[RMDB]
Source: RMDB library M2PK90, as collected in RNAgym. An RNA of 177 nucleotides, treated with DMS and 2A3 and read out base by base. For DMS the reverse transcriptase was MarathonRT. The reactions ran in a buffer of 150 mM KOAc, 10 mM MgCl2 and 150 mM bicine (pH 8.5), at 24 C. For 2A3, 2,320 sequencing reads were counted.

RNA sequence: GGGAACGACUCGAGUAGAGUCGAAAAUACAAUAGCGUACGGAACCAAGCUAAGAGGUUGGAAGUCCAACGGUAGAGGGCUUGGUUCGCAGCUGCUCUAGAAGAGGUCCCACUCCCUACGCCGCAAAGCAUAAUAGGUCGUUCGCGACCUAUUAUGCAAAAGAAACAACAACAACAAC
Reactivity to DMS in 0.01 (KOAc 150mM, MgCl2 10mM, bicine 150mM(pH8.5), 24C), signal-to-noise 3, nucleotides 027 to 126: u010a150c140a040a110u010a040g010c050g010u000a120c080g020g000a000a030c000c000a010a010g030c000u000a110a060g020a150g000g010u010u000g000g030a300a200g010u000c010c000a000a000c020g010g010u010a090g010a160g020g000g000c000u000u000g000g000u010u000c000g020c020a130g010c040u000g010c040u000c010u010a070g010a080a090g000a030g010g000u000c010c020c030a190c100u000c000c020c000u000a070c070g010c020c030g020c130a070a040a110
Reactivity to 2A3 in 0.01 (KOAc 150mM, MgCl2 10mM, bicine 150mM(pH8.5), 24C), signal-to-noise 2, nucleotides 027 to 126: u250a020c100a050a130u040a060g020c020g060u090a040c060g090g000a020a010c000c000a010a000g000c010u090a100a070g090a100g300g000u030u020g050g010a250a120g140u130c020c010a000a010c030g050g060u100a120g030a120g150g050g000c000u010u000g000g000u000u000c010g010c000a030g000c020u020g020c010u020c030u040a050g030a130a000g040a140g000g020u020c010c010c000a000c030u010c000c030c000u040a050c070g030c020c010g020c090a060a050a020